Description:
Structure probing data (2A3 and DMS) for a 177-nucleotide construct. Source: RMDB library OK1LIB, as collected in RNAgym.
[RMDB]
RNA sequence: GGGAACGACUCGAGUAGAGUCGAAAAGAGCGUCGAGAGACGAAGAGAAGUGCACCGAUCAGCAAUGGAGAACGUAAUGGUGCACAAGAGUAAGUCAGUGAAACGUUCUCCGGGCACUGGAGGCAGAAAUACCUCCUGAGUUCGCUCAGGAGGUAUUAAAAGAAACAACAACAACAAC
Reactivity to 2A3 in 0.01 (KOAc 150mM, MgCl2 10mM, bicine 150mM(pH8.5), 24C), signal-to-noise 7, nucleotides 027 to 126: g080a010g010c000g000u010c020g000a030g000a010g000a080c050g030a070a010g100a000g060a300a010g010u010g010c000a000c000c010g030a130u120c100a020g090c030a030a160u150g000g000a020g000a010a000c000g000u050a070a120u170g020g010u010g010c010a000c000a000a020g060a030g090u200a170a020g040u050c110a020g030u020g170a180a050a010c000g000u000u000c000u010c000c000g000g010g000c100a050c050u050g020g000a030g060g000c010a030g070a030
Reactivity to DMS in 0.01 (KOAc 150mM, MgCl2 10mM, bicine 150mM(pH8.5), 24C), signal-to-noise 6, nucleotides 027 to 126: g020a060g010c010g020u000c000g010a270g010a210g000a040c050g010a100a060g000a140g020a130a110g000u000g020c020a000c000c010g010a140u040c180a090g000c200a060a060u040g010g000a000g000a020a010c010g010u010a060a080u020g010g000u000g000c020a000c030a030a020g000a110g010u030a080a080g010u010c050a080g020u020g000a100a090a040c000g000u000u000c000u010c010c010g000g000g000c060a050c030u000g010g000a060g000g010c060a070g010a070
Source information
The 2A3 profile rests on 6,489 reads. Conditions: 150 mM KOAc, 10 mM MgCl2 and 150 mM bicine (pH 8.5), 24 C. 2A3 adducts were read by reverse transcription with SuperScript II with manganese.